Conditions: 150 mM KOAc, 10 mM MgCl2 and 150 mM bicine (pH 8.5), 24 C.
The record gives the reactivity of an RNA of 207 nucleotides to 2A3.
2A3 adducts were read by reverse transcription with SuperScript II with manganese.
The data come from the RNA Mapping Database (RMDB), library OK3TST.
RNA sequence: GGGAACGACUCGAGUAGAGUCGAAAAUUAGAGGGACUCAUUUGGGGAGUAUACUCAUGGUAAAGGAGGUUUAGGUAGGGGCCAGACUUUGGCGAGCUGUCAGUGGGAGACAUGCCUGCCCACAAGAGUAGAUCAGGAUAGCACGGUGGAUUAGAGAGGGAAAAUAAUAUUUCGAUAUUAUUUUCCCAAAAGAAACAACAACAACAAC
Reactivity to 2A3 in 0.01 (KOAc 150mM, MgCl2 10mM, bicine 150mM(pH8.5), 24C), signal-to-noise 1, nucleotides 027 to 156: u180u120a050g000a030g020g050g020a030c010u040c090a070u150u020u040g020g010g010g000a060g030u040a070u040a060c070u080c050a040u060g000g040u090a070a110a080g030g020a050g010g020u070u100u110a070g010g020u020a020g000g010g000g000c000c000a040g040a050c050u090u010u040g000g030c000g000a020g010c020u020g000u030c010a040g000u090g020g030g000a050g010a030c010a010u060g020c020c050u090g000c000c010c020a010c000a050a020g000a000g050u070a010g020a040u060c000a040g060g000a020u010a030g040c030a010c050g000g010u050g010g010a060u060u160a080g020a000g030a090